[RMDB]
RNA sequence: GGGAACGACUCGAGUAGAGUCGAAAACAUGCAGCGAUCAGGUCAGCUGUAGAGUUAGUGAGUUUCAGCGUCUCUACAUUGAUACGGCAACCUACAUACUUACAAUACUUGCGUUGUACGUCCUGGCUGAAUAACAGAUACUUGCGGUCGCGAGUACCGUACACCUGUGGUUCGCCACAGGUGUACGAAAAGAAACAACAACAACAAC
Reactivity to 2A3 in 0.01 (KOAc 150mM, MgCl2 10mM, bicine 150mM(pH8.5), 24C), signal-to-noise 3, nucleotides 027 to 156: c070a100u230g030c020a010g000c030g080a040u060c020a010g040g060u020c040a040g010c090u020g010u000a010g000a010g030u090u300a030g000u030g120a070g010u060u090u140c080a050g030c000g060u010c010u000c000u010a020c020a060u060u150g020a040u080a130c010g010g000c020a010a030c020c030u080a090c030a130u160a070c090u250u040a020c060a120a150u050a140c050u070u180g020c060g020u000u010g030u030a150c000g010u020c000c010u000g030g000c020u020g010a120a030u110a090a020c030a020g030a050u040a090c000u020u070g010c040g090g030u080c040g000c000g020a010g010u020a020c020
Reactivity to DMS in 0.01 (KOAc 150mM, MgCl2 10mM, bicine 150mM(pH8.5), 24C), signal-to-noise 2, nucleotides 027 to 156: c040a090u000g020c040a040g020c020g060a170u020c070a100g070g000u010c030a170g030c060u000g000u010a060g020a070g010u000u000a100g000u000g000a100g020u000u000u000c050a300g020c020g000u000c010u000c060u000a050c050a090u000u000g000a120u000a080c020g000g010c030a050a010c020c010u000a070c030a110u010a030c070u000u000a130c110a080a070u000a010c060u010u000g000c080g060u000u000g000u000a010c110g010u000c030c060u020g000g000c000u010g020a090a080u010a060a070c050a200g000a150u000a040c040u000u000g010c060g050g020u020c080g030c020g020a060g010u000a040c040